[RMDB]
RNA sequence: GGGAACGACUCGAGUAGAGUCGAAAAAGUAGAGACACUUACUCUUGUGGGUCUUUGGGCUCAAAGCCUAUGCCUGCCUGUUAUUCUUAUACUUUUGAUACUUUUGCGGGCUUAUGCACUUCACCUCUCGUAUCCUUGAGUUCGCUCAAGGAUACGAAAAAGAAACAACAACAACAAC
Reactivity to 2A3 in 0.01 (KOAc 150mM, MgCl2 10mM, bicine 150mM(pH8.5), 24C), signal-to-noise 3, nucleotides 027 to 126: a000g070u050a030g000a000g010a010c010a050c100u130u140a060c060u040c000u090u100g050u070g020g000g010u030c060u170u110u090g070g000g000c000u060c160a100a080a000g000c000c000u020a030u060g010c000c010u010g000c000c000u040g080u090u090a200u200u060c050u050u260a250u040a300c040u100u110u050u090g050a030u090a130c030u050u120u070u170g040c060g020g000g030c040u050u060a070u130g030c050a070c060u040u080c060a040c040c040u000c010
Reactivity to DMS in 0.01 (KOAc 150mM, MgCl2 10mM, bicine 150mM(pH8.5), 24C), signal-to-noise 2, nucleotides 027 to 126: a020g000u010a030g000a080g000a070c170a070c080u000u010a070c050u000c100u000u000g030u000g010g000g000u010c070u000u000u000g030g000g030c000u000c200a080a080a090g020c010c010u000a030u010g010c020c000u000g020c030c210u000g010u000u000a030u000u000c040u010u020a140u010a080c100u000u010u010u000g000a080u010a030c070u000u000u000u000g000c020g020g010g010c030u000u000a040u000g010c080a060c060u000u000c050a080c040c020u000c140